Structure probing data (DMS and 2A3) for a 177-nucleotide construct. For 2A3 the reverse transcriptase was SuperScript II with manganese. DMS adducts were read by reverse transcription with MarathonRT. Reactivities are given for positions 27 through 126. For 2A3, 8,199 sequencing reads were counted. The reactions ran in a buffer of 150 mM KOAc, 10 mM MgCl2 and 150 mM bicine (pH 8.5), at 24 C. The DMS profile rests on 5,661 reads.
RNA sequence: GGGAACGACUCGAGUAGAGUCGAAAAGAGGAUUCAACGAGCUUCGUAGCAACGAUAGCAACGUAGCUUUUGCUACGACCCAAGCUAUCGAGGGAAGCUACGUCCCUUGCUCGAGGGGAGAAUCCGACAGCCAUCAUAAUUUCGAUUAUGAUGGCUGAAAAGAAACAACAACAACAAC
Reactivity to DMS in 0.01 (KOAc 150mM, MgCl2 10mM, bicine 150mM(pH8.5), 24C), signal-to-noise 5, nucleotides 027 to 126: g000a190g000g010a020u000u000c000a220a130c070g010a070g010c020u000u000c010g020u010a080g020c050a140a200c040g010a020u000a010g000c010a100a150c020g010u000a000g010c000u010u010u000u010g010c000u000a000c000g000a120c180c130c110a100a110g000c010u000a000u000c000g010a140g030g010g000a080a070g000c020u000a030c050g000u000c040c030c030u000u000g000c080u000c040g020a070g010g010g010g010a150g000a030a000u000c000c000g000a250
Reactivity to 2A3 in 0.01 (KOAc 150mM, MgCl2 10mM, bicine 150mM(pH8.5), 24C), signal-to-noise 5, nucleotides 027 to 126: g160a020g000g000a000u010u020c030a090a060c070g010a010g010c030u070u040c040g120u110a030g020c040a060a080c010g010a010u010a000g010c010a030a060c010g000u000a000g000c010u150u230u240u300g000c000u000a000c000g100a130c010c040c040a030a010g000c010u000a000u020c000g000a070g040g090g020a070a030g000c020u060a080c020g050u060c010c010c000u020u070g000c050u050c050g020a060g010g030g010g000a090g000a010a000u010c000c000g000a010